[RMDB]
RNA sequence: GGGAACGACUCGAGUAGAGUCGAAAAACGCGGAGUACGCUCCGCGACAACACUUCUUUCGACCCGCUAACCGAGACCUAUGGGUCGUUUAAUUACGUCUCUAUCUUACUCACAUAACAUCGCACAAAAAACGUGGUUCGGUUCGCCGAACCACGAAGACCUUCUGAUAGUUCGCUAUCAGAAGGUCAAAAGAAACAACAACAACAAC
Reactivity to 2A3 in 0.01 (KOAc 150mM, MgCl2 10mM, bicine 150mM(pH8.5), 24C), signal-to-noise 2, nucleotides 027 to 156: a000c010g020c000g000g020a000g030u030a000c160g020c040u010c020c000g020c020g000a000c010a100a000c000a030c040u110u150c070u050u160u060c020g000a010c040c000c010g000c150u070a030a050c060c070g050a020g070a080c000c020u060a150u220g030g000g000u000c010g000u000u010u020a130a110u130u070a010c030g000u000c000u020c000u080a110u080c020u090u150a050c040u110c110a060c010a170u140a110a030c070a220u210c050g080c090a040c120a010a040a070a100a090a000c040g000u000g000g000u000u000c000g020g000u040u040c110g100c040c010g000a000a000c000c000a000c000g000a000a000